[RMDB]
RNA sequence: GGGAACGACUCGAGUAGAGUCGAAAAAAAUUUGAGGGAAGCAGGGGUUCUUCACUGUUCCACUGAACCUUGCCGCUGAGACCAAGUGUCCACACCACUUCAUGAAUAGCUACGUAACGAGGUCUUGAGAACUUGAACAAUUCGUUGUUCAAGUUCUAAAAGAAACAACAACAACAAC
Reactivity to 2A3 in 0.01 (KOAc 150mM, MgCl2 10mM, bicine 150mM(pH8.5), 24C), signal-to-noise 1, nucleotides 027 to 126: a000a000a000u120u050u060g020a030g000g020g030a050a010g000c010a030g050g010g000g000u080u000c030u050u000c020a030c080u080g040u090u050c020c000a040c040u060g050a040a040c000c000u010u060g060c050c080g090c090u040g000a040g010a070c000c020a070a030g050u030g010u030c010c030a050c000a010c060c010a030c030u080u070c050a060u050g120a110a040u080a060g010c030u090a050c010g070u050a060a030c020g050a050g060g050u050c030u010u050g040
Reactivity to DMS in 0.01 (KOAc 150mM, MgCl2 10mM, bicine 150mM(pH8.5), 24C), signal-to-noise 3, nucleotides 027 to 126: a020a030a070u010u000u000g020a100g010g000g010a140a040g010c030a080g000g000g010g010u000u000c060u000u010c080a100c130u000g000u000u000c020c010a130c090u010g010a050a060c040c010u000u000g020c050c070g000c030u000g000a160g000a080c060c050a040a060g010u000g010u000c030c050a050c070a060c100c040a020c040u000u000c080a070u020g010a050a040u000a080g000c050u000a040c090g000u000a060a060c110g020a090g010g000u010c040u000u000g010